[RMDB]
RNA sequence: GGGAACGACUCGAGUAGAGUCGAAAACUACCAAAUGUUUUGUUGCAGUUCUAUACUGAAACGAGGCAUGUACUUCCUGUAUUUAUUUUGACCUGUCUGUCAAAUUUGUUUACACCGCCUUAUGGGCCUUAUACUACCAGUUCGCUGGUAGUAUAAGAAAAGAAACAACAACAACAAC
Reactivity to 2A3 in 0.01 (KOAc 150mM, MgCl2 10mM, bicine 150mM(pH8.5), 24C), signal-to-noise 9, nucleotides 027 to 126: c050u080a060c020c050a100a080a060u030g000u010u010u010u010g010u000u020g010c000a010g000u050u090c150u260a160u100a150c010u010g010a030a000a000c010g000a000g010g000c010a010u050g030u060a050c040u040u040c010c020u060g090u080a160u040u220u020a100u030u060u030u020g030a030c030c030u130g130u250c060u060g030u020c060a010a020a060u070u080u050g080u020u040u030a060c080a050c020c050g050c010c010u120u140a110u250g040g010g000c000
Reactivity to DMS in 0.01 (KOAc 150mM, MgCl2 10mM, bicine 150mM(pH8.5), 24C), signal-to-noise 9, nucleotides 027 to 126: c180u010a110c070c300a080a130a030u000g010u000u000u000u000g010u000u000g000c020a020g010u000u010c230u010a130u030a040c010u010g000a030a010a020c010g000a010g000g000c000a010u000g000u010a070c140u010u000c020c020u000g010u010a050u010u010u020a040u010u000u000u000g000a030c020c160u020g000u010c140u010g000u000c010a030a040a060u010u000u000g000u000u000u010a060c060a120c170c100g010c010c010u000u030a090u030g010g000g000c030